[RMDB]
RNA sequence: GGGAACGACUCGAGUAGAGUCGAAAAGAAAAGAGCCGCAAGCGCAGAUAUGCGCAAUACCGUAACCGCGGCACGGUACACCGGCAAGCCAUCAAAGAGAGCCGGUGAUAGAUGGCAUACAAAAAAAGUUAUAGCAGAUGUUCGCAUCUGCUAUAACAAAAGAAACAACAACAACAAC
Reactivity to 2A3 in 0.01 (KOAc 150mM, MgCl2 10mM, bicine 150mM(pH8.5), 24C), signal-to-noise 1, nucleotides 027 to 126: g130a040a120a010a000g070a000g030c020c030g020c130a150a070g000c030g010c050a000g050a250u250a110u260g000c010g000c000a010a020u030a020c010c000g000u000a040a070c010c030g020c010g000g000c000a000c000g000g000u010a040c020a040c000c000g000g070c040a100a090g040c080c010a040u110c030a020a130a110g110a030g010a040g120c010c010g020g000u000g010a020u020a020g040a020u020g000g060c050a050u100a180c080a020a110a010a040a020a040a020
Reactivity to DMS in 0.01 (KOAc 150mM, MgCl2 10mM, bicine 150mM(pH8.5), 24C), signal-to-noise 1, nucleotides 027 to 126: g000a150a060a220a100g020a200g000c000c010g000c010a080a090g000c000g040c000a070g000a130u000a040u010g010c000g000c000a120a070u000a050c040c000g040u000a100a200c040c050g000c020g020g060c000a040c000g000g000u000a070c040a050c070c000g020g000c000a250a130g000c000c000a000u050c050a100a170a090g010a150g000a230g010c010c010g000g000u000g010a060u000a150g000a020u000g010g030c000a190u030a080c060a000a000a040a070a020a020a130

An RNA of 177 nucleotides, treated with 2A3 and DMS and read out base by base. The reactions ran in a buffer of 150 mM KOAc, 10 mM MgCl2 and 150 mM bicine (pH 8.5), at 24 C. Reactivities are given for positions 27 through 126. Values are in units of 0.01, from 0 to 300, in steps of 10.